Annotation
This 170-nucleotide RNA was probed chemically with DMS and 2A3.

RNA sequence: GGGAACGACUCGAGUAGAGUCGAAAACCCCACCGGGCGCUCCCCUCGGCGGGCCGUCCGUUGGGUUCACACCCCCAGGCCGCGGGCCGGCUGCUCUUCUUUCUCUUUCGUCGUCAUCCUUGGCUAAAUAGAGCAUGCUUCGGCAUGCUCAAAAGAAACAACAACAACAAC
Reactivity to DMS in 0.01 (KOAc 150mM, MgCl2 10mM, bicine 150mM(pH8.5), 24C), signal-to-noise 5, nucleotides 027 to 129: c290c010c000c050a060c080c000g000g090g020c040g010c160u050c040c020c040c020u090c140g030g020c120g040g050g040c300c030g050u050c000c030g030u000u070g000g000g060u050u070c110a180c150a080c110c020c010c010c090a090g000g000c070c040g070c140g000g000g040c070c000g020g000c080u030g030c020u000c050u020u000c060u010u000u000c010u050c030u000u100u000c060g010u020c020g100u040c070a080u030c020c060u010u070g000g040c100u000a050a090a050u060a090
Reactivity to 2A3 in 0.01 (KOAc 150mM, MgCl2 10mM, bicine 150mM(pH8.5), 24C), signal-to-noise 4, nucleotides 027 to 129: c000c000c000c000a010c030c000g010g000g000c030g010c040u160c010c010c000c010u110c100g200g000c080g000g020g010c030c010g000u020c000c000g020u000u040g000g000g000u140u110c060a070c000a030c090c010c010c000c010a030g060g030c030c020g040c000g020g020g000c010c010g020g000c060u010g020c000u010c000u090u030c010u050u190u010c040u030c000u040u060u050c020g030u010c010g030u040c000a040u040c050c010u030u050g020g000c000u070a040a060a090u080a040
For 2A3, 7,127 sequencing reads were counted.
2A3 adducts were read by reverse transcription with SuperScript II with manganese.